[RMDB]
RNA sequence: GGGAACGACUCGAGUAGAGUCGAAAAGCCAUGAGUCGCAACGCAAAGCCGCGGCAAGUGGAGUUAGCGAGAAGAGACUAGGCUUUGGUUUCUUCAAGUGAAGCGGUCACCAAUCAGGUGUGGUAGUAGGAGCCUGCAUGGUUCGCCAUGCAGGCAACACGUGUAAUAACUUCGGUUAUUACACGUGAAAAGAAACAACAACAACAAC
Reactivity to DMS in 0.01 (KOAc 150mM, MgCl2 10mM, bicine 150mM(pH8.5), 24C), signal-to-noise 2, nucleotides 027 to 156: g000c000c010a060u040g010a300g030u050c040g040c010a040a050c020g000c050a180a190a260g010c000c030g000c010g030g010c000a030a300g050u030g000g010a060g010u000u000a250g000c040g020a300g010a040a060g010a080g010a050c010u000a060g040g010c130u000u000u000g010g000u010u000u000c020u030u000c020a040a300g000u010g000a120a060g020c080g010g040u000c020a080c020c040a030a100u000c110a080g000g040u000g000u010g010g010u000a070g030u010a100g000g010a150g000c000c000u000g000c000a020u000g060g000u000u000c280g000c030c000a030u000g030c000a020g000g010c010a010a000
Reactivity to 2A3 in 0.01 (KOAc 150mM, MgCl2 10mM, bicine 150mM(pH8.5), 24C), signal-to-noise 2, nucleotides 027 to 156: g030c000c000a040u030g010a000g000u010c000g000c000a040a040c020g040c140a170a260a010g050c080c060g000c040g010g000c040a030a020g010u000g010g020a070g010u100u090a050g000c040g010a030g010a050a040g010a010g000a010c010u030a030g140g100c080u140u120u080g010g000u000u010u010c010u010u000c010a040a040g010u020g060a060a010g020c060g030g060u070c030a020c060c000a010a170u210c070a080g000g040u030g050u000g050g030u050a050g040u020a050g050g210a020g040c000c000u000g010c010a000u000g030g020u040u040c070g000c090c010a000u000g000c010a000g000g000c000a010a000

Background: Chemical mapping of a 207-nucleotide RNA with DMS and 2A3. As a SHAPE reagent, 2A3 marks flexible, mostly unpaired nucleotides at the ribose 2'-OH. DMS adducts were read by reverse transcription with MarathonRT. The reactions ran in a buffer of 150 mM KOAc, 10 mM MgCl2 and 150 mM bicine (pH 8.5), at 24 C. For 2A3 the reverse transcriptase was SuperScript II with manganese.